[RMDB]
RNA sequence: GGGAACGACUCGAGUAGAGUCGAAAACAUCCGUGGGGUGAGGGCAUGAACCAUGGCCGCCAGUCCCUACUACCUACGCCAAACCCACGCCCCGGACUGCGCCUGCUCUGUGUGCUGGUCCGUAAGGACGCCCUCGAACGUUCGCGUUCGAGGGCGUAAAAGAAACAACAACAACAAC
Reactivity to 2A3 in 0.01 (KOAc 150mM, MgCl2 10mM, bicine 150mM(pH8.5), 24C), signal-to-noise 1, nucleotides 027 to 126: c050a030u020c030c060g060u060g020g030g080g100u130g030a100g000g070g000c040a060u240g090a020a000c090c000a070u020g040g050c000c060g070c050c010a010g000u060c000c040c040u010a050c040u020a030c010c010u070a030c070g020c030c000a000a120a110c070c020c020a020c050g000c000c000c000c000g000g000a010c000u030g010c020g020c020c010u080g080c020u120c070u170g260u060g010u020g030c030u060g000g100u020c000c010g010u030a000a000g120g000
Reactivity to DMS in 0.01 (KOAc 150mM, MgCl2 10mM, bicine 150mM(pH8.5), 24C), signal-to-noise 1, nucleotides 027 to 126: c110a190u020c080c030g040u030g000g000g020g000u000g010a160g000g000g000c160a090u020g010a090a070c080c020a090u000g010g020c050c040g000c060c090a120g000u010c010c040c010u000a050c080u010a050c060c000u000a050c160g010c050c050a030a120a150c040c020c020a060c100g010c020c000c040c020g000g000a010c020u000g000c030g020c020c000u000g010c150u000c090u000g000u000g060u010g000c020u000g020g000u000c020c030g030u030a060a130g000g000